Chemical mapping of a 207-nucleotide RNA with 2A3.
The 2A3 profile rests on 586 reads.
Reactivities are given for positions 27 through 156.
2A3 adducts were read by reverse transcription with SuperScript II with manganese.
The data come from the RNA Mapping Database (RMDB), library VIROID.
The reactions ran in a buffer of 150 mM KOAc, 10 mM MgCl2 and 150 mM bicine (pH 8.5), at 24 C.
[RMDB]
RNA sequence: GGGAACGACUCGAGUAGAGUCGAAAACGAGCCGCCUUCUUUUUUCUUUUCUGCUCAGGAGGUCAGGUGUGAACCACAGGAACCACGAGUUUAGUUCCGAGGAACCAACUGCGGUUCCAAGGGCUAAACGCCCUCGCCCCGAAGCAAGUAAGAUAGACCAAUUCUCUCAGUUCGCUGAGAGAAUUGGAAAAGAAACAACAACAACAAC
Reactivity to 2A3 in 0.01 (KOAc 150mM, MgCl2 10mM, bicine 150mM(pH8.5), 24C), signal-to-noise 1, nucleotides 027 to 156: c010g010a020g060c030c050g040c080c000u090u000c000u080u230u020u000u130u050c000u040u090u130u120c040u030g010c010u020c040a050g000g050a090g020g010u110c040a030g040g000u070g060u030g090a040a070c030c010a010c090a080g000g040a000a040c020c000a020c070g070a080g070u030u000u020a080g020u300u300c060c000g000a030g000g010a000a000c010c010a070a140c290u300g090c260g010g000u000u000c000c000a000a030g000g000g000c000u020a010a000a000c030g060c010c000c000u010c080g020c020c000c000c000g010a060a010g010c040a030a030g040u020a000a020g010a100u140a080g090a040